[RMDB]
Chemical mapping of a 207-nucleotide RNA with 2A3.
2A3 adducts were read by reverse transcription with SuperScript II with manganese.
The 2A3 profile rests on 859 reads.
It was measured as part of the RMDB library M2RFPK.
RNA sequence: GGGAACGACUCGAGUAGAGUCGAAAAAAGAGUUUCUCCGUUCUCUAAAAUAAAAACAGAGUGGUGGAGUCAUUAUGACCCUCUUAGAGUUUCCAGUUUCUCUAAAAAACUGGUGGCGAGCCUGCUCAAAAUCAUUAGACCUUCGGGUCUAAUGAAAGAUAAGCUAUCUGUUCGCAGAUAGCUUAUCAAAAGAAACAACAACAACAAC
Reactivity to 2A3 in 0.01 (KOAc 150mM, MgCl2 10mM, bicine 150mM(pH8.5), 24C), signal-to-noise 2, nucleotides 027 to 156: a000a040g000a000g000u000u010u010c000u000c000c000g000u020u000c010u000c010u020a200a300a100a070u120a050a030a060a040a010c030a040g010a000g000u050g000g020u060g030g060a270g070u010c020a060u050u300a040u300g010a030c000c010c000u020c010u070u130a020g000a010g010u010u000u000c000c010a000g000u010u000u010c000u020c060u090a060a020a000a000a000a000c000u000g020g000u020g030g050c030g000a040g070c030c120u080g000c020u030c050a000a110a030a060u010c000a000u010u000a010g000a000c000c000u020u110c300g080g020g000u000c000u000a000a000u000g000a000a000a000